[RMDB]
RNA sequence: GGGAACGACUCGAGUAGAGUCGAAAACUGCGACGAAUGCCGUUGGACGUGGAUUGCGUUCCAGAAGCUUGCGGGCGAGGCAAUAGCCGAUUUCAUCGGUGAAAUCGCCAUGUUCCACCAGGUCGGAGCCCGUACGGAUAUUCGUAUCCGUACGGGCAAAAGAAACAACAACAACAAC
Reactivity to 2A3 in 0.01 (KOAc 150mM, MgCl2 10mM, bicine 150mM(pH8.5), 24C), signal-to-noise 1, nucleotides 027 to 126: c010u050g080c020g030a030c030g050a130a090u130g050c060c030g070u030u040g000g020a020c000g050u050g080g240a240u050u290g000c070g050u140u000c000c000a000g010a080a030g020c040u070u080g000c110g010g000g000c020g000a020g010g040c040a070a000u040a040g010c000c030g000a000u060u150u100c160a080u010c010g050g000u060g010a000a000a100u000c040g030c010c000a060u100g020u020u060c020c010a020c010c020a110g060g050u020c000g030g040a030
Reactivity to DMS in 0.01 (KOAc 150mM, MgCl2 10mM, bicine 150mM(pH8.5), 24C), signal-to-noise 1, nucleotides 027 to 126: c120u000g020c060g030a030c060g000a070a060u010g010c060c080g000u000u000g010g010a060c020g000u000g020g010a210u000u050g000c050g000u000u030c050c080a090g000a050a040g020c020u000u010g030c150g020g010g020c010g000a090g000g000c000a030a080u000a260g020c020c000g020a030u000u010u030c160a070u000c020g000g000u000g010a030a060a120u010c050g010c030c070a130u050g020u000u020c000c000a110c110c100a040g000g000u000c030g010g020a220